[RMDB]
RNA sequence: GGGAACGACUCGAGUAGAGUCGAAAACAGAUGAUGUUCGCAUCAUCUGAAAUAAAAGCCAUGCAGGAAGGAAGGAGCUUGGCAACCAACCAACCAAAAUAAAAAUCUGUUCCUUCGGGAACAGAAACAUUACAUGAGAGUUCGCUCUCAUGUAAUGAAAAGAAACAACAACAACAAC
Reactivity to DMS in 0.01 (KOAc 150mM, MgCl2 10mM, bicine 150mM(pH8.5), 24C), signal-to-noise 3, nucleotides 027 to 126: c010a000g000a000u000g000a000u000g010u000u020c190g030c010a000u000c000a010u000c000u000g010a050a090a050u020a080a060a120a110g000c010c020a050u000g010c110a110g000g000a120a160g010g010a070a150g000g010a170g000c030u010u000g020g000c030a090a100c030c020a070a130c110c090a040a150c110c080a060a060a090a100u030a010a080a100a070a090u000c000u000g000u000u000c000c010u010u010c180g040g000g010a000a000c000a010g010a030a050a100
Reactivity to 2A3 in 0.01 (KOAc 150mM, MgCl2 10mM, bicine 150mM(pH8.5), 24C), signal-to-noise 5, nucleotides 027 to 126: c000a000g000a000u000g000a000u000g020u080u080c200g000c110a010u000c000a000u000c000u000g010a010a010a000u060a010a070a010a000g020c000c000a010u060g000c020a060g120g110a240a020g080g020a050a030g030g030a150g020c040u070u060g040g000c030a030a080c030c010a020a030c020c010a010a020c020c000a040a080a090a030u230a050a130a030a000a020u010c000u000g000u000u000c010c000u040u050c230g050g010g000a000a000c000a000g000a000a000a000